[RMDB]
RNA sequence: GGGAACGACUCGAGUAGAGUCGAAAACCCCCCAUGUUCGCAUGGGGGGAAAGAACGCUAAUUCGCUAAGCGAGGCCGCGCGCGCGGCAAAACGCGAAGAAAAAAGCCAACUGUUCGCAGUUGGCAACAAACAGUGUCUGUUCGCAGACACUGUUUGAAAAGAAACAACAACAACAAC
Reactivity to 2A3 in 0.01 (KOAc 150mM, MgCl2 10mM, bicine 150mM(pH8.5), 24C), signal-to-noise 2, nucleotides 027 to 126: c000c010c000c010c000c000a010u010g020u020u050c200g010c190a000u000g010g000g010g010g000g050a010a030a020g110a090a010c010g000c030u040a090a140u060u020c010g000c040u060a070a010g000c030g000a090g190g000c000c020g060c030g030c070g080c050g000c010g060g040c000a050a000a000a040c070g000c000g010a010a020g090a020a130a000a010a000a000g000c000c000a000a000c000u000g030u080u070c240g000c110a000g000u000u010g000g010c000a000a010
Reactivity to DMS in 0.01 (KOAc 150mM, MgCl2 10mM, bicine 150mM(pH8.5), 24C), signal-to-noise 3, nucleotides 027 to 126: c000c000c000c000c000c000a030u000g000u010u000c220g050c000a010u010g010g000g010g020g000g010a000a020a040g010a110a160c020g000c010u000a090a110u010u000c010g000c010u000a110a100g010c010g010a140g010g010c010c020g050c020g020c300g020c250g000c030g000g000c010a030a010a020a080c290g010c010g000a010a060g030a000a040a100a090a100a090g000c000c000a010a010c000u000g020u010u000c150g020c020a010g000u000u000g000g010c000a050a030